[RMDB]
RNA sequence: GGGAACGACUCGAGUAGAGUCGAAAACAGAACCGGUGGUAUAGGAGCCGGCCGGACCCGGGCUCCCUCGCUGGCUUCAUCGUCGGGCUCCGACAAGGAAGACAAUGGAAAGCCCACAUCCUGAGAAUGCUAAAAUGUAAUUCGUUACAUUUUAGCAAAAAGAAACAACAACAACAAC
Reactivity to 2A3 in 0.01 (KOAc 150mM, MgCl2 10mM, bicine 150mM(pH8.5), 24C), signal-to-noise 1, nucleotides 027 to 126: c010a050g050a130a030c000c010g040g000u030g010g040u130a110u150a300g080g190a130g120c000c020g030g020c030c000g110g080a020c040c040c000g090g100g000c050u070c020c000c010u060c020g080c040u000g020g020c000u020u000c010a050u020c000g020u000c020g000g230g130c100u040c040c010g010a010c000a070a050g110g020a010a030g010a010c030a030a030u040g030g020a220a190a130g030c000c070c000a050c020a050u040c000c000u040g020a040g040a160a000
Reactivity to DMS in 0.01 (KOAc 150mM, MgCl2 10mM, bicine 150mM(pH8.5), 24C), signal-to-noise 3, nucleotides 027 to 126: c130a130g000a130a120c020c010g020g000u010g010g010u010a120u000a160g020g010a250g010c020c030g000g040c060c070g010g000a110c100c150c170g000g030g010c010u000c060c040c030u010c050g010c090u000g000g010c000u000u000c000a050u010c120g010u000c010g010g010g000c170u010c020c000g010a010c020a060a060g010g000a020a020g000a040c040a030a060u000g010g000a030a120a080g000c010c000c010a130c160a080u000c020c010u000g000a140g000a100a150

The record gives the reactivity of an RNA of 177 nucleotides to 2A3 and DMS.
For DMS, 2,267 sequencing reads were counted.
Source: RMDB library M2PK90, as collected in RNAgym.
High 2A3 reactivity points to a flexible backbone, as in loops and unpaired stretches.
The RNA was probed in 150 mM KOAc, 10 mM MgCl2 and 150 mM bicine (pH 8.5) at 24 C.
For 2A3, 866 sequencing reads were counted.